[RMDB]
RNA sequence: GGGAACGACUCGAGUAGAGUCGAAAACAGGCGAGAGAACCAAUGGGCUUUCGAGUGAGGGCUCUAUGUCCAGCAACAGCAUCAGGCAUGACUGUUCAAGCCUGCAGGAAACUUUACAAUCCUUGUCUCGUUAACUAGCAUUCGUGCUAGUUAACGAAAAAGAAACAACAACAACAAC
Reactivity to DMS in 0.01 (KOAc 150mM, MgCl2 10mM, bicine 150mM(pH8.5), 24C), signal-to-noise 4, nucleotides 027 to 126: c050a030g000g010c010g010a150g000a090g020a050a070c070c070a080a110u010g020g010g000c030u000u010u000c050g010a160g020u010g020a050g010g000g000c010u010c040u000a080u000g010u000c010c050a090g020c120a040a040c040a030g000c020a030u010c060a150g000g040c130a090u000g000a140c050u000g000u010u010c040a100a220g020c000c010u000g000c080a050g010g000a100a080a050c090u000u000u000a070c170a090a090u010c040c020u000u010g010u000c080
Reactivity to 2A3 in 0.01 (KOAc 150mM, MgCl2 10mM, bicine 150mM(pH8.5), 24C), signal-to-noise 3, nucleotides 027 to 126: c010a000g020g000c020g020a090g000a020g020a140a040c040c010a090a100u070g020g000g000c020u020u050u070c060g080a110g120u260g060a040g000g020g020c000u000c030u060a070u200g040u030c030c020a010g030c050a040a030c000a030g010c010a010u030c030a050g240g000c090a040u030g090a240c020u030g030u050u030c010a020a020g000c000c010u010g010c010a010g000g060a010a110a020c030u090u070u090a040c070a080a080u070c020c020u080u090g090u060c060
Annotation
The data come from the RNA Mapping Database (RMDB), library OK2TRN. An RNA of 177 nucleotides, treated with DMS and 2A3 and read out base by base. The RNA was probed in 150 mM KOAc, 10 mM MgCl2 and 150 mM bicine (pH 8.5) at 24 C. In probing experiments dimethyl sulfate is read out at A N1 and C N3, which are open when not base-paired. For DMS the reverse transcriptase was MarathonRT. High 2A3 reactivity points to a flexible backbone, as in loops and unpaired stretches.